[RMDB]
RNA sequence: GGGAACGACUCGAGUAGAGUCGAAAAGGCCGAUGGCGGGCGUGGCGUCCAAGGUCGGCGCAAACGUCUCCAAGCUGGACGCCGCAAGCCAGACCUUCGGCAGCAUGGCAAAGGCGGGUGCGGCGAUGCAGGAGACGGGCUCACAGAUCGUAAACGCGGUAGCAGAGAUAUUCGUAUCUCUGCUACCAAAAGAAACAACAACAACAAC
Reactivity to 2A3 in 0.01 (KOAc 150mM, MgCl2 10mM, bicine 150mM(pH8.5), 24C), signal-to-noise 2, nucleotides 027 to 156: g060g000c010c010g030a020u030g020g020c030g030g000g000c040g070u080g100g080c090g010u000c000c000a050a010g080g010u010c010g030g000c010g010c010a070a120a020c020g100u100c000u000c050c010a080a110g000c010u020g000g060a020c040g000c020c010g000c010a010a030g110c000c020a090g010a300c000c000u020u020c040g110g000c010a020g080c040a070u170g070g000c000a040a000a070g030g010c000g020g000g000u050g000c000g000g000c000g010a030u060g000c000a020g000g000a000g000a000c020g010g000g000c000u000c000a030c030a020g040a060u030c030g040u100a200a110a000c060g030c080
Reactivity to DMS in 0.01 (KOAc 150mM, MgCl2 10mM, bicine 150mM(pH8.5), 24C), signal-to-noise 1, nucleotides 027 to 156: g040g010c050c010g020a050u000g000g070c300g030g000g000c000g050u000g020g000c020g020u010c010c010a070a300g000g000u000c120g020g130c020g070c110a020a080a080c060g010u020c000u000c000c020a100a300g020c020u000g010g010a160c020g030c030c000g000c020a020a150g020c010c010a080g010a110c010c010u000u000c060g000g030c040a120g000c050a110u010g000g040c110a070a040a120g000g040c040g020g030g020u010g000c010g000g050c020g000a150u010g000c000a200g010g000a070g000a070c070g010g020g040c040u000c000a110c040a260g000a070u000c020g000u010a070a110a100c040g020c200
About this RNA
The record gives the reactivity of an RNA of 207 nucleotides to 2A3 and DMS. The reactions ran in a buffer of 150 mM KOAc, 10 mM MgCl2 and 150 mM bicine (pH 8.5), at 24 C. Values cover nucleotides 27 to 156. DMS adducts were read by reverse transcription with MarathonRT.